[RMDB]
RNA sequence: GGGAACGACUCGAGUAGAGUCGAAAAGAUAUGGAGCGUCCCGGAGCAACAGCCACCAUUCGGAAACGAAUGUGUGGACAUGCUCCCGGACGCUCCUAAGUCAAACCAAUCACUUCGGUGAUUGGAACAUUAACAUAAAGUUCGCUUUAUGUUAAUGAAAAGAAACAACAACAACAAC
Reactivity to DMS in 0.01 (KOAc 150mM, MgCl2 10mM, bicine 150mM(pH8.5), 24C), signal-to-noise 9, nucleotides 027 to 126: g010a050u000a300u000g000g000a010g010c000g010u000c000c000c300g000g010a020g030c010a040a070c300a210g010c010c000a010c000c000a010u000u000c000g000g000a140a100a210c000g010a020a000u000g000u020g030u000g000g000a010c090a130u000g000c000u000c000c000c210g000g010a010c000g010c000u000c000c000u000a010a060g010u000c030a120a130a220c010c000a000a010u000c000a010c000u000u020c190g020g010u000g000a010u000u000g000g010a090a130
Reactivity to 2A3 in 0.01 (KOAc 150mM, MgCl2 10mM, bicine 150mM(pH8.5), 24C), signal-to-noise 8, nucleotides 027 to 126: g030a010u080a030u140g000g010a010g020c010g010u010c030c030c040g020g000a000g000c030a010a160c050a140g070c010c010a000c000c010a000u010u010c000g040g050a090a080a080c020g010a010a010u030g300u110g010u000g070g030a010c010a020u040g000c000u010c010c000c000g010g020a000c000g000c000u000c000c000u000a000a000g000u000c010a010a010a090c010c000a010a000u000c000a000c020u050u120c300g140g000u010g000a000u010u000g000g010a000a010